This 177-nucleotide RNA was probed chemically with 2A3 and DMS. It was measured as part of the RMDB library OK1LIB. The RNA was probed in 150 mM KOAc, 10 mM MgCl2 and 150 mM bicine (pH 8.5) at 24 C. For DMS, 7,986 sequencing reads were counted.
RNA sequence: GGGAACGACUCGAGUAGAGUCGAAAAUUAUCCGCCGCUCCUCGCAGAGAAGUGUUGUCCACCCAAAUGUCCAUGGUGAAUGGCAAGAUGGCGGAAAAGGACAAUAGGGCUAAGCGUACCGCGCGUGGCUAUACGCUAGGUUCGCCUAGCGUAUAGCAAAAGAAACAACAACAACAAC
Reactivity to 2A3 in 0.01 (KOAc 150mM, MgCl2 10mM, bicine 150mM(pH8.5), 24C), signal-to-noise 6, nucleotides 027 to 126: u140u060a050u060c010c000g000c020c000g000c010u010c000c010u050c050g090c070a010g020a020g010a200a080g050u050g010u070u020g020u000c010c000a040c020c020c010a040a110a020u080g050u080c020c000a020u040g030g020u170g130a120a030u040g020g000c020a010a050g150a100u140g020g020c080g010g000a030a070a000a030g000g000a020c020a030a030u110a100g050g050g000c040u050a080a030g020c010g030u050a060c040c050g050c010g000c000g060u040g070
Reactivity to DMS in 0.01 (KOAc 150mM, MgCl2 10mM, bicine 150mM(pH8.5), 24C), signal-to-noise 4, nucleotides 027 to 126: u030u000a090u010c040c030g020c010c020g000c020u000c030c020u020c050g000c100a100g030a060g010a050a080g000u010g000u000u000g000u010c010c020a130c040c020c030a020a090a110u020g000u060c010c010a010u000g010g040u040g000a140a050u000g010g000c020a060a110g010a100u030g000g000c090g020g000a040a020a060a120g000g010a010c010a020a070u020a090g010g010g040c040u020a030a090g000c040g000u030a060c080c060g000c030g000c030g010u010g010